[RMDB]
RNA sequence: GGGAACGACUCGAGUAGAGUCGAAAAAAGGACUUGCAUUUCACCGGGACAAAUGGUGUUGGUGAGGUAGGUCGUGGUAUAGCCCUAACGCUGUUUAAUCUUGCCGAUACACUUCUCGGCGGGUUGCCGUGUAAUCAAAGUUCGCUUUGAUUACACGAAAAGAAACAACAACAACAAC
Reactivity to DMS in 0.01 (KOAc 150mM, MgCl2 10mM, bicine 150mM(pH8.5), 24C), signal-to-noise 9, nucleotides 027 to 126: a110a060g010g000a020c010u000u000g010c010a060u010u010u000c010a020c010c000g020g010g000a040c050a140a130a100u010g030g020u000g010u000u010g010g010u000g010a030g000g010u000a020g010g010u000c010g020u010g000g000u010a090u010a140g010c010c000c010u010a080a110c210g020c070u000g000u000u010u010a040a030u000c010u000u010g020c010c000g000a030u010a090c210a110c270u010u010c080u000c000g010g010c010g000g000g010u000u000g010c250
Reactivity to 2A3 in 0.01 (KOAc 150mM, MgCl2 10mM, bicine 150mM(pH8.5), 24C), signal-to-noise 9, nucleotides 027 to 126: a000a000g090g000a000c010u010u010g000c010a150u130u150u060c010a020c000c010g070g000g020a020c050a040a300a220u300g190g020u220g150u210u040g010g000u020g010a020g000g020u020a010g010g000u020c050g130u040g000g020u100a080u110a140g030c000c020c000u030a110a020c050g030c120u080g080u190u120u170a020a020u010c020u040u300g000c000c000g020a030u070a220c260a070c220u200u070c020u010c030g010g010c010g000g000g000u010u020g010c020